Source: RMDB library TTRDES, as collected in RNAgym. Structure probing data (DMS and 2A3) for a 177-nucleotide construct. The DMS profile rests on 7,683 reads. The reactions ran in a buffer of 150 mM KOAc, 10 mM MgCl2 and 150 mM bicine (pH 8.5), at 24 C.
[RMDB]
RNA sequence: GGGAACGACUCGAGUAGAGUCGAAAAGAUAUGGAGUAGAGUGCGUCCGAUAAGUCGCCAUCGGAAACGAUGGGCGACUUUUGACGGACUCUCUACUCCUAAGUCAAAAGGUCUGUUCGCAGACCAACUUCUAUUAAAUCUUCGGAUUUAAUAGAAGAAAAGAAACAACAACAACAAC
Reactivity to DMS in 0.01 (KOAc 150mM, MgCl2 10mM, bicine 150mM(pH8.5), 24C), signal-to-noise 5, nucleotides 027 to 126: g000a030u000a300u010g000g010a030g010u000a010g010a020g020u000g020c300g010u000c010c010g010a170u010a020a010g010u000c000g020c000c000a030u010c000g010g000a130a080a170c010g010a010u000g020g030g020c000g020a000c000u000u000u000u000g010a190c170g010g000a030c000u010c000u000c000u000a000c010u000c000c000u000a010a060g010u000c020a110a090a160a140g010g000u000c000u000g010u000u010c230g020c010a020g000a020c000c010a050a080
Reactivity to 2A3 in 0.01 (KOAc 150mM, MgCl2 10mM, bicine 150mM(pH8.5), 24C), signal-to-noise 3, nucleotides 027 to 126: g020a010u060a020u130g010g000a010g000u010a010g010a020g020u200g170c170g060u040c010c040g080a110u090a280a010g010u010c020g000c010c010a000u010c010g010g000a060a030a020c010g010a020u050g050g090g030c010g000a000c020u010u010u000u040g030a010c050g000g000a000c000u000c000u000c000u010a000c000u010c000c000u000a000a000g020u000c010a010a010a120a130g010g000u000c000u010g060u100u180c300g030c120a000g000a000c000c000a010a010